[RMDB]
Structure probing data (DMS and 2A3) for a 177-nucleotide construct. High DMS reactivity at an A or C suggests that its Watson-Crick edge is free. The reactions ran in a buffer of 150 mM KOAc, 10 mM MgCl2 and 150 mM bicine (pH 8.5), at 24 C. The DMS profile rests on 2,261 reads. It was measured as part of the RMDB library OK1LIB.
RNA sequence: GGGAACGACUCGAGUAGAGUCGAAAAGAGUGGGCGGUGAGCACGCCCACCGUGGUGGUGUACGGGCCGCCCGAGCUGGCGCGUUUUUUCGGGCACCACCAUUACAGCGUCCGCGGGCCGGCCCCGGCAGUGGACCUUACUUCGGUAAGGUCCACUGAAAAGAAACAACAACAACAAC
Reactivity to DMS in 0.01 (KOAc 150mM, MgCl2 10mM, bicine 150mM(pH8.5), 24C), signal-to-noise 1, nucleotides 027 to 126: g010a190g050u000g020g000g030c000g000g000u040g000a150g010c160a150c020g020c000c010c010a000c010c000g010u000g010g020u000g000g030u020g000u020a040c050g000g000g010c000c000g000c020c010c020g020a080g020c170u000g000g010c040g000c130g000u000u010u010u000u010u010c020g000g000g000c000a020c030c000a040c010c000a000u010u010a030c100a120g060c060g000u010c010c020g040c010g000g000g030c020c060g040g010c030c000c010c010g000g000
Reactivity to 2A3 in 0.01 (KOAc 150mM, MgCl2 10mM, bicine 150mM(pH8.5), 24C), signal-to-noise 3, nucleotides 027 to 126: g180a010g000u010g010g000g000c030g030g030u110g050a070g050c090a040c060g000c010c000c000a000c000c000g010u060g000g030u020g010g010u020g000u030a080c060g000g000g000c000c000g010c000c000c000g060a060g020c140u070g010g000c020g020c040g080u030u000u020u010u140u280c090g020g020g030c010a020c000c000a020c000c000a000u000u090a020c020a010g010c000g020u010c000c030g020c010g020g020g000c110c100g020g000c000c000c010c000g010g020